[RMDB]
RNA sequence: GGGAACGACUCGAGUAGAGUCGAAAACCUUAAGGACUCUUUAGGAUCAGCAUUCUCUUAGCCACUUUGUGGCUCACUCAGAUCUAUCUAUCUGCCUAAACAUAACACUCAACCAUUCUUAUUCUGUGGUUCUGCCACUGCACUGAGCUCCACCUGAUGCGUAAUAGUAUUUCGAUACUAUUACGCAAAAAGAAACAACAACAACAAC
Reactivity to DMS in 0.01 (KOAc 150mM, MgCl2 10mM, bicine 150mM(pH8.5), 24C), signal-to-noise 2, nucleotides 027 to 156: c010c010u010u000a070a110g020g010a060c030u000c050u000u010u000a120g020g020a060u010c000a120g030c040a120u000u000c030u000c020u010u030a090g020c000c020a040c020u010u010u010g050u010g010g000c010u000c060a010c080u010c030a070g000a070u000c030u000a080u010c060u020a080u010c020u000g000c030c010u000a040a040a130c060a050u000a040a070c050a100c050u000c030a040a060c040c040a100u000u000c040u000u000a110u010u010c030u000g030u000g020g000u000u000c060u000g020c040c040a060c060u000g040c040a090c040u010g030a090g030c020u000c020c030a090c020c000u000g000a300
Reactivity to 2A3 in 0.01 (KOAc 150mM, MgCl2 10mM, bicine 150mM(pH8.5), 24C), signal-to-noise 4, nucleotides 027 to 156: c010c000u030u100a070a040g040g030a080c030u040c040u100u030u100a040g010g020a040u070c040a010g040c010a070u130u000c060u000c000u060u140a010g000c010c000a030c060u110u090u300g030u010g010g000c010u000c000a010c000u050c020a020g030a100u050c020u050a070u030c020u030a050u020c010u080g010c000c000u040a040a050a040c040a040u130a080a040c030a030c070u060c040a030a050c040c020a040u100u050c040u070u090a120u160u010c040u080g040u040g050g010u060u060c050u160g050c010c000a030c050u040g020c040a040c030u060g010a010g010c030u010c010c020a060c000c020u000g010a050

Structure probing data (DMS and 2A3) for a 207-nucleotide construct. For 2A3 the reverse transcriptase was SuperScript II with manganese. The 2A3 profile rests on 3,145 reads. For DMS, 4,871 sequencing reads were counted.